[RMDB]
RNA sequence: GGGAACGACUCGAGUAGAGUCGAAAAACACUUAGCAUACCAAACAGUUGAUGGAGCUCUUUUGCGUUUGCCAAAAUUGAUCUUUAGUAUACUGGGAUUGAAAUUUGUACAACUUAAGGAUUUGUUACGAAUCGCUGAGAUUCGUCUCAGCGAUUCGAAAAGAAACAACAACAACAAC
Reactivity to 2A3 in 0.01 (KOAc 150mM, MgCl2 10mM, bicine 150mM(pH8.5), 24C), signal-to-noise 1, nucleotides 027 to 126: a000c000a000c000u080u080a000g020c000a000u000a130c060c000a150a010a060c000a030g000u030u030g080a090u080g000g050a000g000c020u000c020u100u090u010u080g020c050g150u160u180u180g100c030c000a060a070a000a100u020u120g000a010u050c000u000u060u210a030g050u050a070u000a190c080u000g080g020g040a070u010u080g070a040a150a230u040u030u110g050u100a050c000a060a000c110u040u190a040a080g010g040a040u070u070u200g050u000u080a050
Reactivity to DMS in 0.01 (KOAc 150mM, MgCl2 10mM, bicine 150mM(pH8.5), 24C), signal-to-noise 1, nucleotides 027 to 126: a050c080a040c120u010u000a020g010c050a050u000a110c020c030a050a080a130c160a030g020u000u010g000a160u000g030g010a070g000c020u000c060u000u020u000u030g000c040g020u000u030u020g000c160c030a040a040a000a110u000u000g000a020u000c010u000u000u000a050g010u000a120u010a020c010u000g000g000g000a080u000u000g020a070a070a140u000u000u000g000u000a040c030a080a090c050u000u000a050a060g000g000a090u000u000u000g000u000u010a100
Notes: Structure probing data (2A3 and DMS) for a 177-nucleotide construct. The 2A3 profile rests on 645 reads. 2A3 is a SHAPE reagent: it acylates the 2'-hydroxyl of flexible nucleotides of all four kinds.